[RMDB]
RNA sequence: GGGAACGACUCGAGUAGAGUCGAAAACCUGCGGCCAGUGCAAGGAGGCACCAAUGCUCUGAGGCUGUCGCGUGGUGCAGCGUCGAGCAUCCUCGCCGAGGUCCUUUCUGCUGCCUGUCCCGCCUCAUUGGUAGCGGUAUUUCGAUACCGCUACCAAAAAAGAAACAACAACAACAAC
Reactivity to 2A3 in 0.01 (KOAc 150mM, MgCl2 10mM, bicine 150mM(pH8.5), 24C), signal-to-noise 2, nucleotides 027 to 126: c010c020u000g010c000g000g020c010c020a050g010u060g090c010a030a040g020g010a000g000g010c030a010c030c080a010a050u070g010c010u010c090u200g010a020g020g070c030u030g010u030c040g000c040g100u110g070g090u170g000c020a000g000c000g290u050c020g030a010g000c000a020u060c000c010u090c000g070c060c050g040a050g000g010u010c010c000u040u110u120c010u070g130c030u030g000c000c020u010g000u020c040c000c000g000c000c010u060c050a060
Reactivity to DMS in 0.01 (KOAc 150mM, MgCl2 10mM, bicine 150mM(pH8.5), 24C), signal-to-noise 2, nucleotides 027 to 126: c020c010u000g060c020g000g020c300c020a030g000u000g060c010a080a120g020g010a070g000g000c300a090c060c090a140a060u030g000c020u020c000u030g030a080g000g000c030u000g020u000c040g000c190g000u010g010g040u020g000c000a000g030c020g000u020c010g000a030g020c030a000u000c070c050u060c090g000c040c040g000a060g030g010u030c070c060u000u030u000c060u030g000c120u000g000c080c060u020g000u000c040c000c000g000c050c090u010c110a140